[RMDB]
RNA sequence: GGGAACGACUCGAGUAGAGUCGAAAAGCAACUUAGGAUUUUAGGCUCCCCGUGCGUGUCUCGAACCAUGCCGGGCCAAACCCACGGGGGCUGGCGGUCCCCGUGCGGUCAAAAUCAAACCCCUGGAAAAACAGUUCUAGCUUCGGCUAGAACUGAACACCCUAACUUACUUCGGUAAGUUAGGGUGAAAAGAAACAACAACAACAAC
Reactivity to 2A3 in 0.01 (KOAc 150mM, MgCl2 10mM, bicine 150mM(pH8.5), 24C), signal-to-noise 1, nucleotides 027 to 156: g030c020a020a060c040u150u170a090g090g070a100u090u100u040u050a040g020g030c040u120c020c060c010c070g120u220g060c020g000u040g040u070c100u050c300g100a080a020c020c000a010u030g000c000c000g000g040g000c010c010a060a030a000c010c010c000a000c010g000g000g000g020g010c000u010g090g010c140g020g010u000c020c000c000c000g000u020g000c040g000g000u000c000a080a000a000a100u040c010a050a050a140c000c040c000c020u020g120g020a050a120a000a000a000c000a000g000u010u000c000u000a000g020c000u010u070c260g010g010c000u000a000g010a010a000c000u010g000a000a000